[RMDB]
RNA sequence: GGGAACGACUCGAGUAGAGUCGAAAACGCAACGAAACGAAAACAAUCGUUCAGAAAUACUUGACCACGAGGGUUCCCUAUAGUCCGCGUUGGCGGUGCUGCAACCCCGUGCGAUAGGCUAACUGCGAGCUUACUGUGCGUUCGCGCACAGUAAGCUAAAAGAAACAACAACAACAAC
Reactivity to 2A3 in 0.01 (KOAc 150mM, MgCl2 10mM, bicine 150mM(pH8.5), 24C), signal-to-noise 2, nucleotides 027 to 126: c130g000c070a070a100c050g030a140a040a010c030g050a090a050a060a050c100a010a110u020c000g000u000u010c000a010g190a040a180a000u190a130c000u000u000g000a020c000c000a000c000g000a240g060g000g000u020u030c030c000c050u050a050u090a060g080u060c030c000g010c040g130u160u070g150g020c000g000g010u150g060c050u020g020c000a010a050c010c000c000c000g020u000g010c000g030a040u000a000g040g050c040u030a060a080c000u060g060c090g050
Reactivity to DMS in 0.01 (KOAc 150mM, MgCl2 10mM, bicine 150mM(pH8.5), 24C), signal-to-noise 1, nucleotides 027 to 126: c000g000c050a100a080c170g000a030a120a010c000g040a060a100a150a030c170a180a300u050c060g000u000u000c110a000g000a030a240a090u000a170c000u000u000g000a300c300c130a000c000g080a000g030g000g000u000u000c110c110c090u000a000u000a000g060u000c000c000g000c000g170u020u070g030g000c000g030g000u000g000c050u000g000c100a020a050c000c000c000c000g000u000g000c000g000a240u050a000g050g000c100u060a070a000c000u000g000c010g000

The data come from the RNA Mapping Database (RMDB), library RFM100.
An RNA of 177 nucleotides, treated with 2A3 and DMS and read out base by base.
The DMS profile rests on 883 reads.
The 2A3 profile rests on 1,073 reads.